[RMDB]
RNA sequence: GGGAACGACUCGAGUAGAGUCGAAAACUUGACCCAUUAGUAAGCGUGGUCAGCUGCCGAUCAGCCACGGUCUCGAUUAGUUUCCCGCCAAUAAAAGGGGAUCUGCUUAGUUCGUGACAACGAGACAGUCAUAGCUGGUCUUCGGAUCAGUUAUGACAAAAGAAACAACAACAACAAC
Reactivity to 2A3 in 0.01 (KOAc 150mM, MgCl2 10mM, bicine 150mM(pH8.5), 24C), signal-to-noise 9, nucleotides 027 to 126: c020u040u100g050a030c000c000c010a060u050u080a040g110u050a100a020g040c010g010u030g010g010u020c010a010g010c010u020g010c000c020g040a080u050c020a010g010c010c000a020c030g010g020u000c010u000c010g060a060u040u030a020g030u000u020u000c000c000c000g040c010c020a070a050u120a060a080a020a010g000g000g010g000a020u000c010u030g010c010u040u040a030g020u080u050c030g030u030g040a020c010a040a020c030g010a010g020a040c030a020
Reactivity to DMS in 0.01 (KOAc 150mM, MgCl2 10mM, bicine 150mM(pH8.5), 24C), signal-to-noise 9, nucleotides 027 to 126: c110u020u020g010a120c010c000c030a140u040u040a100g010u020a070a070g010c080g020u020g000g000u010c030a070g010c050u010g000c040c030g000a070u010c070a130g000c030c040a080c070g000g000u000c000u000c020g010a100u020u010a090g010u000u010u010c000c000c010g000c120c120a080a100u030a040a060a090a080g000g000g000g000a040u010c040u010g000c060u010u010a080g010u010u010c040g020u000g010a090c160a090a090c040g000a060g000a060c120a110
This 177-nucleotide RNA was probed chemically with 2A3 and DMS.